[RMDB]
RNA sequence: GGGAACGACUCGAGUAGAGUCGAAAAAGACCAGAAGACCCAGUACCUUCUUGCCAACGGUAUUGACGUGAAACCUACUGACCAUGACGACCAGAAGCUCUGUUACCUGAUUGAGGAAUACUACAACGAAGAGUUCCAGAGUGCCAUUCAGGAGUUAUGUACCAUGGGAUUUCGAUCCCAUGGUACAAAAAGAAACAACAACAACAAC
Reactivity to DMS in 0.01 (KOAc 150mM, MgCl2 10mM, bicine 150mM(pH8.5), 24C), signal-to-noise 1, nucleotides 027 to 156: a110g040a070c010c030a100g010a100a210g000a130c030c030c050a130g000u030a040c030c000u010u000c030u000u010g000c030c030a180a160c210g010g040u000a300u010u000g030a100c020g030u050g000a080a040a050c030c040u000a140c020u010g020a040c070c010a110u020g000a150c020g000a080c020c030a080g040a140a090g000c080u000c060u000g070u000u000a090c030c010u030g000a160u000u000g000a100g010g030a070a120u000a080c090u000a040c060a030a160c050g020a080a100g010a100g030u000u000c010c030a070g000a080g040u000g030c040c020a080u000u010c070a100g000g020a150g030u010u000a090
Reactivity to 2A3 in 0.01 (KOAc 150mM, MgCl2 10mM, bicine 150mM(pH8.5), 24C), signal-to-noise 1, nucleotides 027 to 156: a000g000a020c060c020a010g050a100a010g000a030c000c050c020a000g000u030a070c000c000u080u020c060u060u080g040c100c000a050a030c080g020g000u100a040u000u100g050a090c060g010u050g010a140a000a070c010c020u020a020c060u120g060a130c000c010a110u120g020a030c020g020a030c000c000a040g020a030a010g030c010u010c000u020g000u060u100a030c010c030u060g050a120u140u030g040a020g000g020a030a050u040a180c010u010a030c040a140a060c120g150a110a020g030a000g050u060u070c020c000a000g020a010g070u090g000c000c000a030u000u050c060a040g000g080a010g010u030u040a100
Chemical mapping of a 207-nucleotide RNA with DMS and 2A3. For DMS, 1,595 sequencing reads were counted. The RNA was probed in 150 mM KOAc, 10 mM MgCl2 and 150 mM bicine (pH 8.5) at 24 C.